[RMDB]
RNA sequence: GGGAACGACUCGAGUAGAGUCGAAAACUCGCUGUUUUUGUGGGUGGCUUUCAGCGGGCUGGAGGAGCCGGGAGCGGAGGCGGAGGACCGAGCCAAAAACGUCAGCCGAGGCCGGGCGGCCCCGCUCAAAAUCUUCGUAUCUUCGGAUACGAAGAAACCUAUUGAGAUUGUUCGCAAUCUCAAUAGGAAAAGAAACAACAACAACAAC
Reactivity to 2A3 in 0.01 (KOAc 150mM, MgCl2 10mM, bicine 150mM(pH8.5), 24C), signal-to-noise 2, nucleotides 027 to 156: c000u060c010g010c020u030g050u040u060u040u110u070g070u120g030g030g000u050g020g020c040u050u100u120c050a020g030c080g030g020g000c040u040g020g020a050g020g030a030g020c040c030g040g060g000a040g000c030g010g030a090g000g000c000g020g040a070g000g040a030c020c020g020a050g050c010c020a040a070a050a020a000c040g040u090c080a050g020c050c060g030a010g020g010c000c000g060g040g020c010g030g000c010c000c000c000g000c020u030c010a040a120a040a080u020c000u000u010c000g000u000a000u000c000u010u020c150g100g000a000u000a000c000g010a000a000g000a000a000a000